[RMDB]
RNA sequence: GGGAACGACUCGAGUAGAGUCGAAAAUUCGCGAGUGUGAGAGGGAAGCGCCGCGGCCUGUAUUUCUAGACCUGCCCUUCGCCUGGUUCGUGGCGCCUUGUGACCCCGGGCCCCUGCCGCCUGCAAGUAAUAAGCCUGUUUUCGAACAGGCUUAUUAAAAAGAAACAACAACAACAAC
Reactivity to DMS in 0.01 (KOAc 150mM, MgCl2 10mM, bicine 150mM(pH8.5), 24C), signal-to-noise 6, nucleotides 027 to 126: u020u010c040g010c030g010a070g020u010g010u020g000a080g000a090g010g000g020a140a140g000c030g020c010c010g010c030g000g000c020c010u020g000u020a070u020u020u020c070u010a080g000a100c050c020u000g000c020c010c020u010u020c080g000c060c040u010g010g020u000u020c040g040u000g010g010c020g000c020c010u010u010g010u020g000a140c040c020c020c050g000g000g000c020c020c020c010u000g000c040c040g020c010c010u010g010c080a060a110g010
Reactivity to 2A3 in 0.01 (KOAc 150mM, MgCl2 10mM, bicine 150mM(pH8.5), 24C), signal-to-noise 5, nucleotides 027 to 126: u100u060c030g000c030g030a070g060u090g010u050g040a100g010a050g010g060g030a070a040g020c010g000c010c000g000c000g010g020c000c010u060g050u100a160u020u190u030c060u030a080g020a160c000c010u020g010c020c010c000u030u060c030g000c000c020u040g030g010u120u210c020g020u030g010g020c020g020c000c000u020u030g040u060g050a070c000c030c000c010g000g010g000c010c000c000c020u020g010c000c000g020c010c010u020g010c020a010a060g030

The record gives the reactivity of an RNA of 177 nucleotides to DMS and 2A3. The RNA was probed in 150 mM KOAc, 10 mM MgCl2 and 150 mM bicine (pH 8.5) at 24 C. For 2A3 the reverse transcriptase was SuperScript II with manganese. Values are in units of 0.01, from 0 to 300, in steps of 10. DMS adducts were read by reverse transcription with MarathonRT.